Structure probing data (DMS and 2A3) for a 177-nucleotide construct. It was measured as part of the RMDB library OK2TST. For 2A3, 1,225 sequencing reads were counted. The reactions ran in a buffer of 150 mM KOAc, 10 mM MgCl2 and 150 mM bicine (pH 8.5), at 24 C. DMS adducts were read by reverse transcription with MarathonRT. The DMS profile rests on 923 reads.
RNA sequence: GGGAACGACUCGAGUAGAGUCGAAAACAAUUACUGGCCACACCCACAUCUAGAAUUUAUGCUGAGGAGGUCAGAGCUUUACAGCAUGAAUUGUAUACACAGGUGUAUAGACGUGAUAAGCCCGAUAGCAGGAUAGAUAGUUCGCUAUCUAUCCUGCAAAAGAAACAACAACAACAAC
Reactivity to DMS in 0.01 (KOAc 150mM, MgCl2 10mM, bicine 150mM(pH8.5), 24C), signal-to-noise 2, nucleotides 027 to 126: c120a120a060u020u000a060c040u000g040g010c100c150a120c030a050c020c010c040a040c230a100u000c100u010a060g010a020a040u000u000u000a000u010g020c080u000g000a250g010g030a020g010g010u000c150a070g020a140g000c020u000u000u010a060c060a000g000c000a030u030g020a030a020u000u000g020u010a070u010a090c130a100c210a050g030g000u010g000u000a060u010a130g000a110c070g000u000g020a140u010a050a140g000c010c000c010g010a120u000a030
Reactivity to 2A3 in 0.01 (KOAc 150mM, MgCl2 10mM, bicine 150mM(pH8.5), 24C), signal-to-noise 2, nucleotides 027 to 126: c000a010a060u080u070a090c030u030g020g080c000c020a010c010a000c000c040c010a030c000a040u000c060u070a050g080a230a040u040u050u000a010u020g000c030u000g020a080g110g050a020g000g130u080c170a040g000a100g130c000u010u060u100a040c020a010g000c000a010u030g030a030a020u080u000g110u140a080u030a080c050a000c040a020g070g000u030g040u000a050u050a080g070a020c050g000u030g020a070u030a110a020g000c010c010c020g080a060u140a060